An RNA of 207 nucleotides, treated with DMS and 2A3 and read out base by base.
For 2A3 the reverse transcriptase was SuperScript II with manganese.
The DMS profile rests on 2,512 reads.

RNA sequence: GGGAACGACUCGAGUAGAGUCGAAAAGCAGUGAGUGAUGUAAGAGGUUUUGAAUGUUGAGGGCAUUCUUAACAUAGCUGUGCUUGUCUUCCUCUUCCGGAUGACAGACAAAGAGGCGCAGCUGCCGGCUAAGACCACCGCCCCUGUCCACCUUGUACAUACUUUUCCGGUUCGCCGGAAAAGUAUGAAAAGAAACAACAACAACAAC
Reactivity to DMS in 0.01 (KOAc 150mM, MgCl2 10mM, bicine 150mM(pH8.5), 24C), signal-to-noise 1, nucleotides 027 to 156: g000c010a020g040u020g010a090g010u000g010a090u020g020u010a050a090g000a090g020g030u000u000u000u000g030a060a050u000g040u020u000g040a090g020g070g020c000a080u000u000c020u000u010a000a050c020a140u000a070g040c020u020g020u010g020c000u000u000g000u000c020u020u020c040c010u010c110u010u010c140c080g010g060a050u000g000a090c090a050g030a220c050a050a120a100g020a080g010g040c060g020c020a040g000c030u010g020c160c010g020g000c030u000a040a130g000a080c100c040a090c110c000g010c010c000c020c090u050g000u010c010c020a120c090c030u030u010g010u030a140
Reactivity to 2A3 in 0.01 (KOAc 150mM, MgCl2 10mM, bicine 150mM(pH8.5), 24C), signal-to-noise 3, nucleotides 027 to 156: g030c010a020g010u010g060a040g030u020g050a100u060g050u090a050a030g060a050g100g040u020u060u050u040g040a060a020u030g010u050u080g070a110g020g030g000c010a010u050u040c000u020u050a040a030c040a110u090a010g000c010u010g000u010g010c040u040u050g000u000c000u020u020c010c010u070c060u190u100c080c070g010g010a030u080g010a020c050a050g040a020c060a050a120a010g130a080g020g040c010g000c010a000g000c000u000g020c020c000g040g010c040u070a070a020g020a090c000c010a040c010c050g000c000c000c000c010u000g050u030c040c010a050c030c010u040u030g020u000a030